[RMDB]
RNA sequence: GGGAACGACUCGAGUAGAGUCGAAAAUCAAUUGGUUAAUUUCUCAUUUAGAUGUAAAGGAGCUUUUGGCUUAUGUAUGCGUGGAAAAGUUAAUAAAUAUGUACAAUCUGUCAGGACCUUUGAUAAAAGCCAAGUGAUACAAAUGAAUAUUUUUAAAUCAUUAGUAUCGAUUCGUCGAUACUAAUGAAAAAGAAACAACAACAACAAC
Reactivity to 2A3 in 0.01 (KOAc 150mM, MgCl2 10mM, bicine 150mM(pH8.5), 24C), signal-to-noise 4, nucleotides 027 to 156: u050c020a020a070u030u050g020g010u050u080a050a060u110u110u040c050u020c030a060u110u160u200a090g030a060u080g010u150a040a020a030g020g010a100g060c030u090u120u110u110g040g010c010u060u020a010u090g040u000a020u090g020c040g030u050g070g010a030a090a050a120g020u070u050a070a020u130a180a140a020u170a060u150g010u020a030c010a010a130u010c030u040g040u010c010a000g020g040a050c000c000u010u030u050g050a050u090a090a110a030a000g000c000c010a020a020g030u010g020a020u040a130c040a040a130a050u110g040a060a020u220a150u300u240u080u230u280a060a240a050
Reactivity to DMS in 0.01 (KOAc 150mM, MgCl2 10mM, bicine 150mM(pH8.5), 24C), signal-to-noise 2, nucleotides 027 to 156: u000c020a040a130u020u000g010g030u000u000a090a110u000u010u010c040u000c040a080u010u000u010a070g000a070u010g000u010a030a060a160g000g030a110g020c040u010u010u010u000g030g020c010u000u000a070u000g020u000a030u010g050c070g020u000g020g000a080a060a080a170g000u000u010a040a090u010a040a120a090u000a060u000g000u000a080c030a110a100u000c090u010g010u020c040a050g030g010a060c020c020u000u000u000g030a190u000a050a060a070a090g030c030c010a050a070g020u000g000a130u000a120c020a030a060a110u000g000a080a110u000a030u000u000u000u030u000a030a110a230